[RMDB]
Structure probing data (2A3 and DMS) for a 207-nucleotide construct. It was measured as part of the RMDB library OK3TST. The 2A3 profile rests on 871 reads. For 2A3 the reverse transcriptase was SuperScript II with manganese. The reactions ran in a buffer of 150 mM KOAc, 10 mM MgCl2 and 150 mM bicine (pH 8.5), at 24 C. For DMS the reverse transcriptase was MarathonRT. Values cover nucleotides 27 to 156.
RNA sequence: GGGAACGACUCGAGUAGAGUCGAAAAGGCUGUUCACCAUAAGGCAGGAAAUGGCCAGUAGGGGUCUAUGGGAUUCCUUUCGUCAAUCCGAGAGAGGCGAAGAGACAAUUGAAGAAAAAUUUGAAAUCACUGGAACCAUGCGCAGACUUGCAGACCAUAAACCAAAGAGGUUCGCCUCUUUGGUUUAAAAAGAAACAACAACAACAAC
Reactivity to 2A3 in 0.01 (KOAc 150mM, MgCl2 10mM, bicine 150mM(pH8.5), 24C), signal-to-noise 2, nucleotides 027 to 156: g030g000c010u000g000u010u020c020a040c120c010a050u060a160a050g030g000c040a030g050g030a010a130a070u030g040g020c010c000a010g010u040a020g000g030g000g000u000c020u070a110u150g050g040g010a000u040u040c020c000u000u130u020c010g040u000c020a040a090u050c050c050g030a040g010a000g000a010g120g030c010g040a020a010g020a000g000a010c020a090a120u100u100g020a070a140g120a100a100a030a040a050u120u130u210g060a050a110a010u010c000a010c030u010g020g000a030a010c000c000a040u020g020c020g000c030a010g000a090c010u000u050g010c030a000g010a020c010c000a010
Reactivity to DMS in 0.01 (KOAc 150mM, MgCl2 10mM, bicine 150mM(pH8.5), 24C), signal-to-noise 2, nucleotides 027 to 156: g000g020c040u000g000u020u010c040a090c040c030a070u000a060a080g010g010c030a100g030g010a060a050a070u010g020g020c000c010a110g020u000a110g010g000g020g040u000c060u030a100u010g020g020g010a100u000u000c010c020u010u000u010c050g040u010c050a080a200u010c070c060g000a170g020a110g000a110g000g000c000g010a060a060g000a110g010a090c050a060a150u000u000g010a050a150g010a030a070a080a090a110u010u010u000g000a060a050a040u000c040a060c050u000g020g000a050a070c000c020a050u000g000c050g020c030a050g010a080c050u010u010g010c040a100g040a060c040c040a260